Source information: This 177-nucleotide RNA was probed chemically with DMS and 2A3.
RNA sequence: GGGAACGACUCGAGUAGAGUCGAAAAGUGCCAAACUGGAGGAAGGAACGGGCAACGGUAGGUCAGUAUGCCCCGAAUGUGCUGGGCGACACGCGGGCUACAAUGGCCGAGACAGUGGGAUGCAACGCGAAACAUAACUCUUCGGAGUUAUGUUUCGAAAAGAAACAACAACAACAAC
Reactivity to DMS in 0.01 (KOAc 150mM, MgCl2 10mM, bicine 150mM(pH8.5), 24C), signal-to-noise 3, nucleotides 027 to 126: g010u010g030c010c020a070a080a130c120u000g000g010a070g010g010a070a040g000g000a110a070c130g000g000g010c070a060a060c100g000g000u000a070g020g020u000c040a070g020u010a050u010g000c090c010c030c050g000a080a100u000g010u000g000c050u000g010g010g010c020g010a140c030a030c110g000c080g010g000g000c010u010a020c050a070a110u000g010g010c010c010g010a110g020a060c120a020g020u000g000g000g010a050u020g000c090a070a060c170g000
Reactivity to 2A3 in 0.01 (KOAc 150mM, MgCl2 10mM, bicine 150mM(pH8.5), 24C), signal-to-noise 2, nucleotides 027 to 126: g020u040g010c000c000a040a080a040c060u120g050g060a060g020g030a120a030g030g020a040a030c020g020g010g000c010a030a020c000g010g060u090a040g020g050u000c020a030g010u020a050u220g010c000c000c010c010g030a160a130u160g010u030g040c040u070g040g100g000c050g020a010c000a000c020g030c060g000g000g010c000u010a000c030a050a130u060g020g000c010c000g000a010g000a000c020a020g010u050g030g030g000a040u040g020c000a050a040c050g010
Source information
For 2A3 the reverse transcriptase was SuperScript II with manganese. High 2A3 reactivity points to a flexible backbone, as in loops and unpaired stretches. The reactions ran in a buffer of 150 mM KOAc, 10 mM MgCl2 and 150 mM bicine (pH 8.5), at 24 C. The data come from the RNA Mapping Database (RMDB), library RFMREP. Values are in units of 0.01, from 0 to 300, in steps of 10.